[RMDB]
RNA sequence: GGGAACGACUCGAGUAGAGUCGAAAAGUUCAUGACGAUAAUGGCAAAGCCAACUUGAGCGAAAUUUAUGAUAUGCUAUACAUAACUGCCAACAUCAUGAAUGAUAAAAAUCUGGCAUAUCCUCGUACCCUCGCGGAGCUUUCGAGCUCCGCGAGGGAAAAGAAACAACAACAACAAC
Reactivity to 2A3 in 0.01 (KOAc 150mM, MgCl2 10mM, bicine 150mM(pH8.5), 24C), signal-to-noise 1, nucleotides 027 to 126: g030u030u000c030a020u100g000a050c000g070a140u000a120a050u150g000g000c000a160a160a000g020c080c000a000a300c230u300u300g070a130g060c000g030a020a020a130u090u090u140a170u220g000a050u000a070u150g100c000u000a030u120a220c030a000u000a000a000c040u180g000c020c030a170a080c030a050u000c000a000u000g000a000a000u030g100a100u300a030a110a000a000a000u220c080u000g000g110c000a000u120a000u170c000c000u080c000g020u000a070